[RMDB]
Description: Source: RMDB library OK1LIB, as collected in RNAgym. An RNA of 177 nucleotides, treated with 2A3 and DMS and read out base by base. For DMS the reverse transcriptase was MarathonRT. For DMS, 15,414 sequencing reads were counted. The RNA was probed in 150 mM KOAc, 10 mM MgCl2 and 150 mM bicine (pH 8.5) at 24 C. Values cover nucleotides 27 to 126.
RNA sequence: GGGAACGACUCGAGUAGAGUCGAAAAGCGGGCAGAUUCAAUUAGUGUCCUAAAUUUAUUCGCGUUUCAAGAUUUCAAAGGAUUGAUCCUCUUAUCAGAAACGAUAAGUGCUACUCCGUCCUAUUCAAAAUGCUCAUUUAUUCGUAAAUGAGCAUUUAAAAGAAACAACAACAACAAC
Reactivity to 2A3 in 0.01 (KOAc 150mM, MgCl2 10mM, bicine 150mM(pH8.5), 24C), signal-to-noise 7, nucleotides 027 to 126: g070c050g010g010g000c010a030g050a150u130u130c080a130a200u140u090a090g110u010g010u050c020c000u020a050a080a050u150u160u100a130u050u110c050g020c040g040u010u030u050c030a070a050g040a130u030u060u120c150a160a110a000g030g000a030u030u160g040a060u110c010c010u010c020u010u040a000u010c000a030g190a110a050a050c060g000a020u050a110a010g010u010g020c030u030a020c030u000c000c010g010u000c000c000u040a070u060u130c050a000
Reactivity to DMS in 0.01 (KOAc 150mM, MgCl2 10mM, bicine 150mM(pH8.5), 24C), signal-to-noise 6, nucleotides 027 to 126: g020c100g000g010g020c030a070g000a100u020u030c220a100a130u030u040a050g010u000g000u000c020c020u000a050a120a110u040u020u040a120u020u010c040g000c070g000u000u010u010c020a080a110g010a080u010u020u020c160a060a120a030g010g000a070u010u020g000a080u020c100c020u000c040u000u000a030u000c010a100g000a070a060a090c100g000a040u020a010a010g000u020g000c040u010a030c060u000c010c030g000u010c000c010u000a090u020u030c080a050